[RMDB]
RNA sequence: GGGAACGACUCGAGUAGAGUCGAAAAAUCAGGCGGGUUGUUUUCGAGGUGGCCGUGGUUGUUCACGUUGACGCCGUUUACAACCAGGGUGUUGGCGAUAGUCACGCUUCCAGUGAAAUUCGCCUGCAUGAUUAACGACUUUCGAGUCGUUAAUCAUAAAAGAAACAACAACAACAAC
Reactivity to 2A3 in 0.01 (KOAc 150mM, MgCl2 10mM, bicine 150mM(pH8.5), 24C), signal-to-noise 2, nucleotides 027 to 126: a010u080c020a000g040g000c020g030g020g010u000u130g040u010u220u020u030c050g020a040g080g040u030g010g020c060c060g050u000g030g000u000u050g030u050u090c130a020c040g000u000u070g050a030c030g010c050c000g000u040u030u050a080c040a070a020c010c010a010g100g000g000u100g030u050u070g000g000c020g010a040u050a080g060u050c000a010c010g000c040u080u000c010c010a070g010u050g190a030a000a000u060u020c000g000c000c020u000g000c010
Reactivity to DMS in 0.01 (KOAc 150mM, MgCl2 10mM, bicine 150mM(pH8.5), 24C), signal-to-noise 4, nucleotides 027 to 126: a060u010c040a020g000g010c010g010g000g020u010u010g010u000u000u000u000c070g010a210g010g000u000g030g010c040c040g010u000g010g000u000u000g010u000u000c130a080c030g010u000u000g010a030c170g030c300c010g000u000u010u010a080c110a020a050c110c100a090g000g010g020u000g000u000u010g010g000c020g000a070u020a070g000u000c010a060c010g010c070u000u000c040c070a120g020u000g000a040a030a090u010u010c020g010c000c000u020g000c200
The record gives the reactivity of an RNA of 177 nucleotides to 2A3 and DMS.
2A3 adducts were read by reverse transcription with SuperScript II with manganese.
Conditions: 150 mM KOAc, 10 mM MgCl2 and 150 mM bicine (pH 8.5), 24 C.
It was measured as part of the RMDB library OK2TST.
For 2A3, 1,796 sequencing reads were counted.